[RMDB]
RNA sequence: GGGAACGACUCGAGUAGAGUCGAAAAGGCGAGCCGUGUUUAGCUUGGGAUCACGUAACAAACUGAGCAAUAAAUACAAACGCAAACGAUAAUUAUUCACUAGCUGCAGCGUAAUAGCACAGCUCGUUUCUCCUAGGCUUCCCACAGUCUAGACAGAGUGAAAAUGAUCGUUCGCGAUCAUUUUCACAAAAGAAACAACAACAACAAC
Reactivity to 2A3 in 0.01 (KOAc 150mM, MgCl2 10mM, bicine 150mM(pH8.5), 24C), signal-to-noise 2, nucleotides 027 to 156: g100g000c000g000a010g030c000c000g000u000g010u070u050u020a000g000c010u040u050g020g020g000a030u150c070a040c140g120u180a180a020c060a120a010a010c010u040g030a000g030c020a010a030u130a150a040a030u180a040c060a050a150a000c070g000c010a050a060a030c010g010a040u070a090a030u200u180a090u200u090c070a060c110u180a070g060c050u040g020c050a040g020c040g010u030a040a080u070a080g000c020a000c000a020g000c000u000c010g000u000u090u010c020u010c010c010u000a000g000g000c000u020u030c010c010c010a030c110a000g010u000c010u000a010g010a030c090a010g270a000